[RMDB]
RNA sequence: GGGAACGACUCGAGUAGAGUCGAAAAUAGUUUCAGUGUGCAAAAACACAUUGGCGCUCCAGCAAACUUGCGUGUUGUUGGUCAUGCCAUGCAAGGCACUCUUUUGAAGUUGACUGUCGAUGUUGCUCAUCCUAUAGAACUUCGGUUCUAUAGGAUGAAAAGAAACAACAACAACAAC
Reactivity to DMS in 0.01 (KOAc 150mM, MgCl2 10mM, bicine 150mM(pH8.5), 24C), signal-to-noise 2, nucleotides 027 to 126: u030a100g000u000u000u020c040a040g020u000g020u010g020c040a050a090a150a100a190c160a060c020a030u000u000g030g000c030g040c120u000c020c010a060g010c030a000a030a030c020u020u020g010c260g010u000g020u010u000g010u010u010g000g000u000c130a120u020g020c040c030a000u000g000c120a060a070g010g020c020a060c060u000c010u010u000u010u010g010a070a070g010u000u010g010a040c040u010g010u000c040g000a140u010g010u000u000g010c060u010
Reactivity to 2A3 in 0.01 (KOAc 150mM, MgCl2 10mM, bicine 150mM(pH8.5), 24C), signal-to-noise 2, nucleotides 027 to 126: u070a000g040u030u010u030c020a000g020u030g020u030g070c040a000a040a040a080a080c040a000c000a020u010u040g000g020c020g000c000u000c000c000a030g010c030a000a100a080c040u150u120g050c080g120u170g000u020u000g010u000u020g000g030u000c030a030u130g040c030c000a000u040g080c040a030a000g060g020c010a010c030u050c000u040u190u080u150g110a150a070g040u180u110g010a060c010u040g020u120c070g060a070u030g010u020u010g000c020u000